[RMDB]
Structure probing data (DMS and 2A3) for a 207-nucleotide construct. The RNA was probed in 150 mM KOAc, 10 mM MgCl2 and 150 mM bicine (pH 8.5) at 24 C.
RNA sequence: GGGAACGACUCGAGUAGAGUCGAAAAAGGCACUCCAUACCCUACUCCGACUCAAUACGUCCCCGUCGUACAGAAUGAUAACAUAUCUCUCCAAAUAUCUGAGCUUGGGUAUACGGGGAAACCCAACAAAAGCAAUUGUGGUUCGCCACAAUUGCAAUCUAUUAUCCAAGUUCGCUUGGAUAAUAGAAAAAGAAACAACAACAACAAC
Reactivity to DMS in 0.01 (KOAc 150mM, MgCl2 10mM, bicine 150mM(pH8.5), 24C), signal-to-noise 2, nucleotides 027 to 156: a090g000g030c030a070c070u000c100c050a220u000a100c000c000c000u000a070c070u000c020c030g000a140c000u000c040a100a130u000a080c090g000u000c000c000c000c010g050u010c010g000u000a110c050a130g020a120a110u010g010a140u000a070a150c060a040u000a090u010c000u000c030u000c060c010a040a170a100u000a050u010c050u000g000a080g020c100u010u000g010g040g030u000a110u000a040c060g000g000g010g010a060a050a080c010c010c010a020a110c060a050a080a100a210g010c010a000a000u000u000g050u000g020g020u000u000c300g020c010c000a010c000a020a020u000u000g010c000a010a000
Reactivity to 2A3 in 0.01 (KOAc 150mM, MgCl2 10mM, bicine 150mM(pH8.5), 24C), signal-to-noise 6, nucleotides 027 to 156: a000g050g000c030a030c050u040c020c000a020u070a120c000c000c010u030a050c030u030c050c020g060a040c020u010c060a070a110u030a070c010g040u050c000c000c000c010g020u020c010g000u030a070c040a110g100a090a130u120g070a100u120a210a040c050a050u150a120u070c060u010c000u010c040c040a080a140a120u150a140u090c100u110g050a030g070c100u040u030g010g000g000u020a020u010a030c010g000g000g000g030a010a020a000c000c000c000a010a020c020a010a130a010a010g000c000a000a000u000u000g000u010g020g040u030u070c180g050c060c000a000c000a000a000u000u000g000c000a000a010